Record summary: Structure probing data (2A3 and DMS) for a 207-nucleotide construct. The data come from the RNA Mapping Database (RMDB), library M2RFPK. 2A3 adducts were read by reverse transcription with SuperScript II with manganese. The RNA was probed in 150 mM KOAc, 10 mM MgCl2 and 150 mM bicine (pH 8.5) at 24 C.
RNA sequence: GGGAACGACUCGAGUAGAGUCGAAAAGAAUUGGUAUGUAAGCUACUUCUUCCAGUAGCUGCGUCAUGACAUCAAGGUUAUGCAUACUGAGCCGAAGCUCAGCUUCGGUCCUCCAAGGAAGACCAAAUACAGCUCAGCCCGUUCGCGGGCUGAGCAACUGUAUAAAAUGCUUCGGCAUUUUAUACAGAAAAGAAACAACAACAACAAC
Reactivity to 2A3 in 0.01 (KOAc 150mM, MgCl2 10mM, bicine 150mM(pH8.5), 24C), signal-to-noise 2, nucleotides 027 to 156: g060a010a090u010u010g000g000u000a000u010g000u010a010a010g000c000u010a000c010u060u140c000u020u000c000c000a000g000u000a000g000c010u000g000c010g000u010c000a000u000g010a010c010a070u240c220a250a020g300g000u000u010a010u000g000c000a000u000a000c000u010g010a000g010c010c000g000a000a000g010c030u060c300a020g000c000u020u000c000g000g020u010c000c010u050c040c030a050a050g000g000a000a010g000a000c010c070a000a070a050u210a110c080a030g000c000u010c000a000g000c000c010c000g020u080u080c110g030c030g040g000g030c010u000g000a010g000c010a000a000
Reactivity to DMS in 0.01 (KOAc 150mM, MgCl2 10mM, bicine 150mM(pH8.5), 24C), signal-to-noise 1, nucleotides 027 to 156: g000a130a050u000u010g020g030u010a000u010g000u010a300a300g020c000u030a010c010u000u000c070u010u000c020c050a300g020u000a020g000c000u020g000c070g030u000c010a090u000g030a050c000a280u000c210a160a150g020g010u010u000a030u000g010c010a040u000a000c020u000g040a120g000c010c000g000a020a070g030c010u000c160a140g030c000u000u000c000g000g000u000c000c010u010c070c070a100a120g040g020a020a030g000a180c150c040a060a060a130u010a090c150a140g030c020u010c000a000g000c000c000c010g100u000u000c300g040c000g000g020g020c030u000g010a000g010c010a000a000